RNA sequence: GGGAACGACUCGAGUAGAGUCGAAAAGAUAUGGACUAAGAGCGAUAAGAUGCCCUCGGAAACGAGGGUCAUCUUUUGACGCUUAUGUCCUAAGUCAAAGUCUGUGAUGGUUCGCCAUCACAGACAACGUAGCUUGUAGGUUCGCCUACAAGCUACGAAAAGAAACAACAACAACAAC
Reactivity to 2A3 in 0.01 (KOAc 150mM, MgCl2 10mM, bicine 150mM(pH8.5), 24C), signal-to-noise 3, nucleotides 027 to 126: g040a000u070a020u120g010g010a000c010u080a190a240g020a030g130c010g030a100u050a270a000g010a000u000g000c000c010c000u000c010g000g030a070a050a020c020g000a010g020g000g020u030c000a010u000c010u000u010u000u030g030a000c000g000c000u020u010a030u120g000u000c000c010u020a120a020g040u020c080a210a070a020g010u000c000u000g010u010g010a000u010g010g110u060u130c300g050c120c010a010u000c000a000c000a000g010a010c000a000a000
Reactivity to DMS in 0.01 (KOAc 150mM, MgCl2 10mM, bicine 150mM(pH8.5), 24C), signal-to-noise 4, nucleotides 027 to 126: g000a020u010a300u010g010g010a030c010u010a110a150g000a030g020c000g030a170u000a010a010g010a010u000g010c010c000c000u010c020g000g010a080a070a140c000g010a020g000g000g000u020c020a000u000c000u000u000u000u000g020a120c050g030c000u010u000a260u020g000u000c000c000u000a030a130g010u000c040a120a090a120g010u000c000u000g010u010g000a030u000g010g010u000u000c290g020c010c010a010u010c000a000c000a010g010a000c000a010a050